[RMDB]
RNA sequence: GGGAACGACUCGAGUAGAGUCGAAAACUUUCUCUCUGAGGUCUUCAUUGCUCCUUGGUGCAACAGGGUCACCCUCUGCCUGAUGCCUGCUCAUGGAUGGGCUAUGCGGACCUGAAGCCCUGUGCAGAAAAGACUAGAUGUUCGCAUCUAGUCUUUUAAAAGAAACAACAACAACAAC
Reactivity to DMS in 0.01 (KOAc 150mM, MgCl2 10mM, bicine 150mM(pH8.5), 24C), signal-to-noise 6, nucleotides 027 to 126: c120u000u010u000c030u010c040u010c060u010g010a070g020g000u000c020u000u010c100a070u010u000g010c070u000c010c050u000u000g020g020u010g000c080a050a060c040a050g000g010g020u000c050a120c090c060c080u020c060u000g010c050c070u000g000a110u000g010c020c020u000g000c070u000c090a090u010g010g010a080u010g010g000g000c010u000a070u010g000c050g010g000a050c060c040u000g010a100a180g010c010c010c010u000g020u000g010c060a130g000
Reactivity to 2A3 in 0.01 (KOAc 150mM, MgCl2 10mM, bicine 150mM(pH8.5), 24C), signal-to-noise 3, nucleotides 027 to 126: c010u050u080u030c020u020c000u000c030u050g060a010g070g020u040c020u080u030c040a140u130u140g030c030u050c020c030u040u060g090g000u060g040c040a130a050c020a040g030g010g040u050c030a080c010c020c000u030c030u020g030c010c040u080g070a100u170g110c000c020u030g060c030u080c090a110u180g070g050a110u040g020g000g000c020u010a030u080g020c000g000g040a020c000c000u010g010a020a000g000c010c000c000u020g030u040g020c040a020g110